[RMDB]
RNA sequence: GGGAACGACUCGAGUAGAGUCGAAAAAGCACCCAGCAGCGGGUGCUGCCUGCACAGCAGGACAGGCAGGAGGAGGCUUUGUCCUUCCCGGUGCCCCGGCGCGGGUGGGCGAGUGGCGGCUGUGCCACCACCGCUACGUUUUCGAACGUAGCGGUGGAAAAGAAACAACAACAACAAC
Reactivity to 2A3 in 0.01 (KOAc 150mM, MgCl2 10mM, bicine 150mM(pH8.5), 24C), signal-to-noise 3, nucleotides 027 to 126: a000g030c010a000c010c010c030a060g120c100a010g090c160g010g000g050u030g000c000u010g030c000c000u040g000c080a120c020a110g080c000a030g040g090a070c030a020g070g020c050a030g020g100a090g050g010a050g060g010c040u300u210u220g120u220c000c000u070u110c010c000c040g020g200u130g010c050c000c020c030g130g020c050g020c060g000g020g050u120g030g000g000c050g030a050g040u080g050g020c020g040g030c060u060g000u050g080c010c010a030
Reactivity to DMS in 0.01 (KOAc 150mM, MgCl2 10mM, bicine 150mM(pH8.5), 24C), signal-to-noise 2, nucleotides 027 to 126: a040g010c010a010c000c000c000a150g020c160a100g000c090g010g000g020u000g020c000u000g010c010c010u000g020c080a040c080a090g020c070a080g010g010a080c070a050g010g020c030a080g010g020a130g010g000a060g000g020c020u000u000u000g000u010c010c020u000u000c000c010c020g010g000u020g000c010c010c050c070g010g010c070g020c070g010g000g020u010g010g000g000c050g000a100g010u010g010g010c000g010g000c020u010g010u000g010c020c060a110